The record gives the reactivity of an RNA of 177 nucleotides to 2A3 and DMS. Values cover nucleotides 27 to 126. It was measured as part of the RMDB library OK2TRN.
[RMDB]
RNA sequence: GGGAACGACUCGAGUAGAGUCGAAAACGGCCUGGACAGCAGCAUUGGGAGCAAUCAGCGCGGCCAGAGCGCUGGGUUCAGGACGACGGAGAUGUCUCAGGCAAUGGACACCGGCCCGCCAGGUGCCCAGUGCCUUGCAGUUCGCUGCAAGGCACUGAAAAGAAACAACAACAACAAC
Reactivity to 2A3 in 0.01 (KOAc 150mM, MgCl2 10mM, bicine 150mM(pH8.5), 24C), signal-to-noise 1, nucleotides 027 to 126: c020g030g040c010c020u000g000g000a020c020a060g160c010a000g000c020a100u030u180g010g070g020a070g030c030a030a120u230c060a050g090c020g000c020g110g090c060c030a040g030a000g060c050g000c000u010g000g050g000u040u010c000a010g030g020a030c020g010a020c000g080g030a160g000a090u130g040u030c030u020c050a030g040g000c000a040a090u090g000g000a000c000a020c030c010g000g040c020c000c000g030c030c030a070g020g050u050g000c000c010
Reactivity to DMS in 0.01 (KOAc 150mM, MgCl2 10mM, bicine 150mM(pH8.5), 24C), signal-to-noise 3, nucleotides 027 to 126: c080g020g020c030c010u000g020g010a040c010a050g010c040a080g020c040a110u000u000g010g010g030a150g020c050a100a170u010c130a080g000c100g010c020g000g020c070c090a060g000a080g020c060g030c020u000g000g010g010u000u010c020a040g020g000a040c040g020a120c080g000g000a160g000a100u010g010u010c000u000c040a080g000g010c070a060a130u010g000g000a010c010a030c020c010g020g000c000c020c040g000c080c030a080g010g020u010g010c000c010
Overview: For DMS the reverse transcriptase was MarathonRT.